[RMDB]
RNA sequence: GGGAACGACUCGAGUAGAGUCGAAAAGAAACAGGAUCGACAAGGGUGUAAAGAUCGCUCUUUUACUCGGCAUGAUACCACCGUUAUCGGGUCAACAGAGUAGUUGCAAAUGACAACAAUGCUCCGGAAGGGGUAGCACCGUUCGCGGUGCUACCAAACACUCCCAAGUGUUCGCACUUGGGAGUGUAAAAGAAACAACAACAACAAC
Reactivity to 2A3 in 0.01 (KOAc 150mM, MgCl2 10mM, bicine 150mM(pH8.5), 24C), signal-to-noise 2, nucleotides 027 to 156: g030a000a140a000c110a060g120g060a050u030c050g040a070c120a080a100g100g040g030u110g070u210a100a140a000g040a020u080c010g020c030u050c000u010u040u040u040a100c060u020c030g040g030c020a000u030g010a010u030a020c000c000a000c010c010g080u050u030a010u040c010g000g000g000u000c010a010a050c020a000g030a030g030u070a010g010u030u000g020c040a040a160a290u160g030a210c000a010a000c000a070a070u070g000c000u010c040c010g040g060a050a030g090g090g000g000u000a000g000c000a010c000c000g050u080u090c230g000c000g040g010u000g030c000u000a000c000c010a010a000
The record gives the reactivity of an RNA of 207 nucleotides to 2A3. Reactivities are rounded to 0.1 and cut off at 0 and 3.